[RMDB]
RNA sequence: GGGAACGACUCGAGUAGAGUCGAAAAUCACAAAGCGGAUUUAGCUCGGUUGGGAGAGGUCCAGACCGAAGAUCUGGUUGUCCUGUGUCCGACCCACAGAAUUCGCACCAUAAACAACGGGAGAUUCAGUCGGUACUCCGUUCGCGGAGUACCGACUAAAAGAAACAACAACAACAAC
Reactivity to 2A3 in 0.01 (KOAc 150mM, MgCl2 10mM, bicine 150mM(pH8.5), 24C), signal-to-noise 1, nucleotides 027 to 126: u020c000a060c040a000a100a050g000c000g000g000a000u000u110u110a180g030c240u180c000g070g000u000u000g000g020g000a110g000a000g010g000u000c000c000a000g000a000c000c070g240a130a070g000a150u000c000u000g230g000u120u190g060u050c000c000u200g060u110g000u140c050c000g020a000c000c000c000a020c110a060g000a000a070u030u020c000g050c000a240c000c000a220u300a170a150a130c170a000a000c060g000g030g000a040g090a000u020u300c090